[RMDB]
RNA sequence: GGGAACGACUCGAGUAGAGUCGAAAACAUUACGAAUUCAGUCGCAAAUUGUAGAAUUAGCUACUCUACGAUUUAGUGAGCGUUAGUAACGUUGUAAUAUAAUAUAGUCUUUGGAAGGGUUAUAUUGGAGCCGCGGACAAGUUCGCUUGUCCGCGAACUUUUUGAAGUACUUCGGUACUUCAAAAAGAAAAGAAACAACAACAACAAC
Reactivity to 2A3 in 0.01 (KOAc 150mM, MgCl2 10mM, bicine 150mM(pH8.5), 24C), signal-to-noise 1, nucleotides 027 to 156: c010a040u070u140a020c040g060a110a120u120u150c070a080g080u040c000g010c010a000a010a040u000u000g000u010a010g010a000a020u040u030a070g010c020u080a030c030u010c000u000a010c000g020a010u000u000u130a100g000u030g040a040g030c010g020u010u070a020g000u060a090a010c050g000u000u000g020u040a170a100u080a080u030a130a000u030a010u010a010g020u000c040u020u050u070g070g050a070a090g000g000g000u000u010a020u010a010u060u050g040g050a040g090c070c020g000c000g040g010a010c000a000a000g000u030u120c170g000c140u000u000g000u000c000c000g000c010g000a000a010